[RMDB]
Overview: The record gives the reactivity of an RNA of 177 nucleotides to 2A3 and DMS. The 2A3 profile rests on 12,282 reads. Values cover nucleotides 27 to 126. For 2A3 the reverse transcriptase was SuperScript II with manganese. The RNA was probed in 150 mM KOAc, 10 mM MgCl2 and 150 mM bicine (pH 8.5) at 24 C.
RNA sequence: GGGAACGACUCGAGUAGAGUCGAAAAGGCGUAGCGUUCGCGCUACGCCAAAUGAGCAUGUACAAAUGGCCAAACUACAUGCGAAAUAAAAGAGGCCAUAAAAAACCACUUAGUUCGCUAAGUGGAACAUAUUCCCUUUGUUCGCAAAGGGAAUAUGAAAAGAAACAACAACAACAAC
Reactivity to 2A3 in 0.01 (KOAc 150mM, MgCl2 10mM, bicine 150mM(pH8.5), 24C), signal-to-noise 6, nucleotides 027 to 126: g000g000c010g000u000a000g000c010g020u020u040c240g000c000g000c070u000a000c000g020c000c000a000a000a000u010g010a000g000c000a010u000g010u020a010c080a070a170a090u050g010g000c010c010a050a050a040c030u020a010c000a010u010g010c010g060a120a140a080u230a030a120a030a010g200a100g020g000c020c020a010u120a010a090a000a000a000a010c000c000a000c000u010u010a010g020u060u040c180g010c160u000a010a000g000u010g000g000a000a000
Reactivity to DMS in 0.01 (KOAc 150mM, MgCl2 10mM, bicine 150mM(pH8.5), 24C), signal-to-noise 4, nucleotides 027 to 126: g000g000c000g020u000a000g020c010g020u000u000c200g040c010g010c000u000a000c000g030c000c010a000a010a040u000g000a260g000c000a010u000g000u000a030c100a050a070a030u000g020g000c000c000a150a060a130c160u010a020c010a000u000g000c010g010a090a090a110u010a050a090a080a130g010a150g010g020c010c000a100u030a000a040a060a060a070a090c000c000a000c000u000u000a000g000u000u000c220g010c010u000a000a000g010u000g010g010a030a050